[RMDB]
RNA sequence: GGGAACGACUCGAGUAGAGUCGAAAAUACUCGUGAACGUAUUCGUCAGAUUGAGUCCAAGACGAUGUCAAAGCUGCGUCACCCAUCUCGUUCACAGGUACUCCGAGAUUAUCUCGAUUAACACCACCUGUCGAGUUCUUUUCGAAGAACUCGACAGAAAAGAAACAACAACAACAAC
Reactivity to 2A3 in 0.01 (KOAc 150mM, MgCl2 10mM, bicine 150mM(pH8.5), 24C), signal-to-noise 1, nucleotides 027 to 126: u040a000c000u010c060g010u010g060a030a010c050g020u070a110u150u150c020g140u110c030a050g040a070u050u120g070a000g000u000c030c000a110a110g030a050c050g060a010u130g110u160c000a110a080a050g030c030u000g000c030g020u000c060a160c070c050c020a060u030c120u020c050g040u060u000c010a000c000a030g040g020u000a010c010u050c060c000g010a010g010a080u270u050a100u210c040u060c060g090a130u110u070a060a040c090a050c110c040a000c000
Reactivity to DMS in 0.01 (KOAc 150mM, MgCl2 10mM, bicine 150mM(pH8.5), 24C), signal-to-noise 1, nucleotides 027 to 126: u000a000c000u000c090g020u000g000a040a030c000g000u010a260u000u000c010g000u000c010a040g010a150u000u000g000a070g000u000c110c090a070a190g000a030c090g000a030u070g000u000c060a050a100a090g030c090u000g000c150g000u000c110a000c030c080c020a050u030c090u000c060g000u000u030c130a040c000a070g000g070u000a020c150u000c140c010g000a030g030a250u000u000a060u020c000u000c040g000a070u000u000a060a140c160a130c080c070a110c270